RNA sequence: GGGAACGACUCGAGUAGAGUCGAAAAAUGAUAACAAGGGCUUGUUUGGUUGAAAAUAAUUCUAAGUGCAUGUUGCAUGAUAAGUGUUCAAUAGAUAUGUAUUCCCUUUAGUGAAGAAUAUGGAUAUAGCACAGUGGUUGGAAACAUGGACCCUGCCGUCUAGCUUAUAGUUCGCUAUAAGCUAGACAAAAGAAACAACAACAACAAC
Reactivity to 2A3 in 0.01 (KOAc 150mM, MgCl2 10mM, bicine 150mM(pH8.5), 24C), signal-to-noise 2, nucleotides 027 to 156: a000u050g030a030u050a120a010c050a060a080g070g010g000c030u040u080g030u110u090u040g110g010u060u070g080a070a100a050a060u140a060a090u180u040c090u090a090a050g020u010g030c030a020u060g040u130u030g060c030a030u030g040a070u080a150a100g010u050g050u130u050c020a010a010u010a090g080a030u070a020u130g040u070a070u010u020c000c000c000u060u050u070a080g000u020g090a080a050g050a060a030u040a050u120g010g000a010u040a010u070a120g050c020a010c010a040g010u010g040g040u040u040g000g010a050a030a030c020a030u060g030g020a050c010c050c010u060g050c030c040
Reactivity to DMS in 0.01 (KOAc 150mM, MgCl2 10mM, bicine 150mM(pH8.5), 24C), signal-to-noise 3, nucleotides 027 to 156: a110u010g020a170u000a070a100c070a110a100g020g010g030c040u000u000g020u010u010u010g000g010u000u000g000a060a070a080a130u010a070a090u010u000c040u010a060a170g040u000g020c040a130u000g000u010u000g020c020a070u000g020a110u000a030a120g010u000g020u000u010c040a050a090u000a070g000a080u000a070u010g020u000a120u010u000c010c010c020u000u010u000a150g030u000g000a060a100g010a050a080u010a050u000g030g010a080u000a060u000a060g010c050a040c040a090g010u010g010g040u000u000g010g010a110a050a080c050a090u010g000g000a060c010c020c010u010g020c110c110
Source: RMDB library OK3TST, as collected in RNAgym. The record gives the reactivity of an RNA of 207 nucleotides to 2A3 and DMS. The RNA was probed in 150 mM KOAc, 10 mM MgCl2 and 150 mM bicine (pH 8.5) at 24 C. Values cover nucleotides 27 to 156. For DMS, 5,781 sequencing reads were counted.